Background:
The record gives the reactivity of an RNA of 177 nucleotides to 2A3 and DMS. Values cover nucleotides 27 to 126. The reactions ran in a buffer of 150 mM KOAc, 10 mM MgCl2 and 150 mM bicine (pH 8.5), at 24 C. Values are in units of 0.01, from 0 to 300, in steps of 10. Source: RMDB library OK2TRN, as collected in RNAgym.
RNA sequence: GGGAACGACUCGAGUAGAGUCGAAAAGCGAGCAGGGUCUCGGCCCGCAGCCCGGUUUCCUCUUGGUGCAGUCGUAGGGUCAGCGAGACGGCGAAUGCGGCGGCGACCAUGCCGAUCAUGGUGAAGGCGAAGAGUAGUGUUUCGACACUACUCUUCGAAAAGAAACAACAACAACAAC
Reactivity to 2A3 in 0.01 (KOAc 150mM, MgCl2 10mM, bicine 150mM(pH8.5), 24C), signal-to-noise 2, nucleotides 027 to 126: g080c030g000a020g020c030a110g020g000g100u030c010u050c050g080g040c030c030c030g000c040a010g000c000c000c000g050g010u040u080u040c000c000u020c030u010u140g060g000u050g010c040a040g020u050c040g080u130a060g040g050g040u050c050a010g080c040g070a050g020a090c010g000g020c010g050a150a040u070g020c000g010g000c000g000g000c020g010a000c020c030a040u040g000c030c020g060a130u160c040a070u150g060g020u060g080a070a010g100g040
Reactivity to DMS in 0.01 (KOAc 150mM, MgCl2 10mM, bicine 150mM(pH8.5), 24C), signal-to-noise 4, nucleotides 027 to 126: g010c020g010a060g010c010a160g000g000g010u010c020u010c080g020g000c020c000c020g020c100a090g020c020c000c020g010g020u000u000u000c030c020u010c070u010u010g010g020u000g030c030a050g020u000c050g010u010a080g010g010g010u010c030a090g020c060g010a120g020a090c100g000g010c050g010a060a100u000g000c040g010g010c020g010g010c050g000a040c020c030a050u010g000c070c060g010a090u020c050a040u000g010g010u000g020a120a120g000g000
2A3 adducts were read by reverse transcription with SuperScript II with manganese. DMS adducts were read by reverse transcription with MarathonRT.